[RMDB]
RNA sequence: GGGAACGACUCGAGUAGAGUCGAAAACAAACGGGCUCGAGAGGCACUGCUCGAGAUGGAUCUGCAGUUCCUGCUGCCACUCGGCGUCGGGAUGGUGACGGCCGUCGCGCUCAUCGCCGGUGCCGUCGCACCUCAUACCCUUCGGGGUAUGAGGUGCAAAAGAAACAACAACAACAAC
Reactivity to 2A3 in 0.01 (KOAc 150mM, MgCl2 10mM, bicine 150mM(pH8.5), 24C), signal-to-noise 3, nucleotides 027 to 126: c040a020a110a040c060g040g030g010c030u030c070g120a080g030a060g120g030c080a030c090u090g020c020u000c050g030a030g000a010u090g080g000a060u060c100u170g040c040a020g010u110u010c020c010u070g060c010u040g000c020c030a070c050u080c020g030g000c030g050u050c060g030g020g000a060u060g010g030u100g030a130c050g100g000c090c060g080u100c020g000c020g010c050u110c060a050u090c060g090c070c020g040g040u020g000c000c010g000u000c010
Reactivity to DMS in 0.01 (KOAc 150mM, MgCl2 10mM, bicine 150mM(pH8.5), 24C), signal-to-noise 2, nucleotides 027 to 126: c140a070a120a150c090g010g030g010c030u000c060g030a060g000a190g020g010c090a060c080u000g020c010u010c030g010a020g000a070u000g010g010a100u010c060u000g000c070a100g000u000u000c010c030u000g020c030u000g000c010c050a120c100u010c020g010g000c020g030u010c030g000g000g000a090u010g000g000u000g000a100c040g010g020c080c040g000u000c010g080c060g000c100u010c120a040u000c040g020c020c010g020g010u000g010c030c020g000u000c130
Structure probing data (2A3 and DMS) for a 177-nucleotide construct.
The RNA was probed in 150 mM KOAc, 10 mM MgCl2 and 150 mM bicine (pH 8.5) at 24 C.
It was measured as part of the RMDB library OK2TST.
DMS adducts were read by reverse transcription with MarathonRT.
For 2A3 the reverse transcriptase was SuperScript II with manganese.
For DMS, 1,500 sequencing reads were counted.